Chemical mapping of a 177-nucleotide RNA with 2A3 and DMS. The data come from the RNA Mapping Database (RMDB), libraries RFM100 and RFMREP. 2A3 adducts were read by reverse transcription with SuperScript II with manganese.
[RMDB]
RNA sequence: GGGAACGACUCGAGUAGAGUCGAAAAGCCCUGUGGUUACUGGAUGCUGUUGUGCAGGUACAGCUCUCCAGUGGAUAUGAGGGGCUAGAGCAAUCCUGUGAUAUAUGCAUGGGGGCUGUUUCUCCUCUAUCCAUGGCCAAUUCGUUGGCCAUGGAUAAAAAGAAACAACAACAACAAC
Reactivity to 2A3 in 0.01 (KOAc 150mM, MgCl2 10mM, bicine 150mM(pH8.5), 24C), signal-to-noise 3, nucleotides 027 to 126: g020c020c000c000u060g080u070g020g080u060u050a010c010u000g000g000a010u010g020c000u000g020u060u010g080u090g090c040a030g060g050u080a000c010a000g000c000u000c070u000c020c000a000g000u020g000g010a090u090a050u190g180a090g000g020g030g000c010u020a030g020a010g070c010a020a170u130c000c010u000g010u030g060a040u080a080u070a070u300g040c050a050u040g000g000g000g000g020c020u010g040u030u010u000c010u010c000c000u000c010
Reactivity to DMS in 0.01 (KOAc 150mM, MgCl2 10mM, bicine 150mM(pH8.5), 24C), signal-to-noise 1, nucleotides 027 to 126: g020c030c000c010u010g000u020g010g000u000u000a010c030u000g000g000a020u000g000c020u000g000u000u000g050u020g010c120a050g000g040u000a020c080a010g020c010u020c140u010c000c000a000g000u020g000g000a050u030a050u070g000a150g000g000g010g000c050u000a060g030a050g030c050a070a100u040c000c000u000g070u030g000a070u030a080u010a020u030g020c020a030u010g000g000g020g020g000c080u010g010u050u000u000c020u020c060c020u000c050